The record gives the reactivity of an RNA of 177 nucleotides to 2A3 and DMS. For DMS, 5,438 sequencing reads were counted. The reactions ran in a buffer of 150 mM KOAc, 10 mM MgCl2 and 150 mM bicine (pH 8.5), at 24 C.
RNA sequence: GGGAACGACUCGAGUAGAGUCGAAAAUGAAGUCAAUAUCAUACGCAUUUUCAGGAUCACCAGCUAAUGGAUUGCUUCGACUAAAUCUCGCUGUAUAGUUUUGGUCAUUUGCGUAUCUGACAAGUGCGAAAUACUUUACCUUCGGGUAAAGUAUUUCAAAAGAAACAACAACAACAAC
Reactivity to 2A3 in 0.01 (KOAc 150mM, MgCl2 10mM, bicine 150mM(pH8.5), 24C), signal-to-noise 4, nucleotides 027 to 126: u120g030a120a040g030u020c020a030a040u070a070u300c070a030u020a020c020g000c010a010u000u000u060u110c050a040g080g000a060u040c020a020c060c010a010g030c040u160a180a090u140g050g020a070u070u140g040c030u070u100c060g080a080c030u080a050a050a040u040c050u020c050g070c070u060g050u130a110u060a140g040u000u020u100u030g000g000u030c010a060u000u020u000g010c000g020u010a050u010c050u020g000a010c000a090a030g080u050g080c060
Reactivity to DMS in 0.01 (KOAc 150mM, MgCl2 10mM, bicine 150mM(pH8.5), 24C), signal-to-noise 5, nucleotides 027 to 126: u010g000a110a110g010u000c040a080a130u010a110u010c190a050u000a050c030g000c000a020u000u010u020u000c260a120g010g000a030u000c060a070c080c020a030g010c100u010a080a100u010g020g000a090u010u000g000c130u010u000c070g010a040c040u000a030a040a040u000c020u000c190g010c140u010g000u000a080u010a070g010u000u000u000u010g010g000u010c030a060u000u000u000g010c000g020u000a020u000c160u000g010a010c050a060a160g000u000g010c280